[RMDB]
Structure probing data (DMS) for a 177-nucleotide construct. It was measured as part of the RMDB library TTRDES. The RNA was probed in 150 mM KOAc, 10 mM MgCl2 and 150 mM bicine (pH 8.5) at 24 C. The DMS profile rests on 932 reads.
RNA sequence: GGGAACGACUCGAGUAGAGUCGAAAAAAAAGAUAUGGAAGAGCUACCCACCGAUAAUAUUACUAUGAAGUUCCCUCGGAAACGAGGGAAUGGAGUAAGAUUAUCGAGGCUCUUCCUAAGUCAAAAAUCAAGAAAUAACGUUCGCGUUAUUUCUUGAAAAAGAAACAACAACAACAAC
Reactivity to DMS in 0.01 (KOAc 150mM, MgCl2 10mM, bicine 150mM(pH8.5), 24C), signal-to-noise 1, nucleotides 027 to 126: a050a030a130a080g000a050u000a130u000g000g000a000a000g000a000g010c020u010a180c110c000c080a300c090c000g010a010u000a020a040u000a120u000u000a010c000u000a230u050g000a060a240g000u000u010c000c010c020u000c040g000g000a090a010a050c000g020a040g000g000g010a000a000u000g020g010a000g010u000a000a010g010a060u000u000a000u000c010g000a020g020g010c010u000c000u000u000c000c000u000a000a120g020u030c050a020a030a060a160a120